[RMDB]
RNA sequence: GGGAACGACUCGAGUAGAGUCGAAAAUGUCAAUAUCUGAAUACUACAACAUUAGCUGUCCCAGCUAAUAUGCGUGUAUUGCAUUUAGGAGCUGGUUCAGAUAAAGGUGUCGCACCUGGAACUGCAGCCUCUUACCGAUUUUCGAAUCGGUAAGAGGAAAAGAAACAACAACAACAAC
Reactivity to 2A3 in 0.01 (KOAc 150mM, MgCl2 10mM, bicine 150mM(pH8.5), 24C), signal-to-noise 3, nucleotides 027 to 126: u080g040u050c030a090a020u020a060u120c050u060g030a000a070u060a270c080u010a050c020a160a040c030a090u040u010a020g000c020u030g030u080c040c020c000a000g000c000u000a020a010u060a010u040g070c050g100u090g060u190a070u090u290g030c010a010u090u060u210a230g120g040a050g050c070u050g040g080u040u050c030a000g030a040u070a070a080a010g070g010u040g140u210c120g070c150a020c010c010u020g060g050a030a010c040u080g000c040a040g050
Reactivity to DMS in 0.01 (KOAc 150mM, MgCl2 10mM, bicine 150mM(pH8.5), 24C), signal-to-noise 2, nucleotides 027 to 126: u010g010u030c060a100a220u000a020u000c030u000g030a000a030u010a140c070u000a050c020a030a150c100a060u000u000a010g000c000u000g010u010c030c030c000a300g000c000u000a010a000u000a030u010g020c120g020u000g000u000a090u010u010g010c030a060u000u000u020a100g020g010a150g030c090u000g010g020u010u010c010a000g020a060u000a030a090a130g000g020u000g000u020c190g000c070a020c020c020u000g010g010a070a050c040u000g000c150a110g030
Chemical mapping of a 177-nucleotide RNA with 2A3 and DMS. DMS adducts were read by reverse transcription with MarathonRT. The 2A3 profile rests on 1,627 reads. Values are in units of 0.01, from 0 to 300, in steps of 10. 2A3 adducts were read by reverse transcription with SuperScript II with manganese.